Chemical mapping of a 207-nucleotide RNA with 2A3 and DMS. For DMS, 1,772 sequencing reads were counted. The reactions ran in a buffer of 150 mM KOAc, 10 mM MgCl2 and 150 mM bicine (pH 8.5), at 24 C. Values cover nucleotides 27 to 156. The data come from the RNA Mapping Database (RMDB), library ARCHII.
[RMDB]
RNA sequence: GGGAACGACUCGAGUAGAGUCGAAAACUACGGCCAGGAAUUCGCUCUCGCUGCGUAAGCAGCCUUAGCCCUGAGCUUCUGGUACCUUCGGGUCCAGCAAUCACCAGGGGAUGUCUGUAAACCCAAAGUGAUUGUCAUAUAGAACAGAAUCGCCGUGCAGCAUAUAACACUUCGGUGUUAUAUGCUGAAAAGAAACAACAACAACAAC
Reactivity to 2A3 in 0.01 (KOAc 150mM, MgCl2 10mM, bicine 150mM(pH8.5), 24C), signal-to-noise 3, nucleotides 027 to 156: c030u050a020c010g000g000c040c010a020g090g040a080a180u260u220c040g000c000u000c000u020c020g020c000u010g000c000g130u200a140a110g000c000a000g010c010c040u070u040a020g000c020c000c000u010g010a010g020c000u050u010c010u020g020g000u130a070c000c000u030u080c180g060g020g000u000c000c010a010g000c000a010a000u030c000a010c040c050a060g060g000g030g000a070u170g060u100c090u020g060u060a070a130a170c000c000c010a010a040a000g010u000g000a000u000u010g000u000c000a000u160a030u070a170g090a080a030c040a050g050a090a070u060c050g010c040c040g030u050g040
Reactivity to DMS in 0.01 (KOAc 150mM, MgCl2 10mM, bicine 150mM(pH8.5), 24C), signal-to-noise 1, nucleotides 027 to 156: c010u010a060c050g040g000c020c030a050g040g020a080a140u000u000c080g040c020u000c020u000c050g000c000u000g000c040g020u000a180a300g020c080a040g020c090c010u000u000a050g010c000c020c000u010g000a120g020c030u000u000c010u000g000g000u000a050c020c040u010u010c200g030g030g020u010c010c010a120g020c050a050a010u000c000a030c020c030a300g010g010g000g000a140u010g010u090c080u000g050u000a060a110a230c000c020c000a060a120a160g000u000g010a070u030u000g010u010c030a090u010a180u000a130g010a100a100c020a120g020a080a100u000c010g020c010c030g000u000g020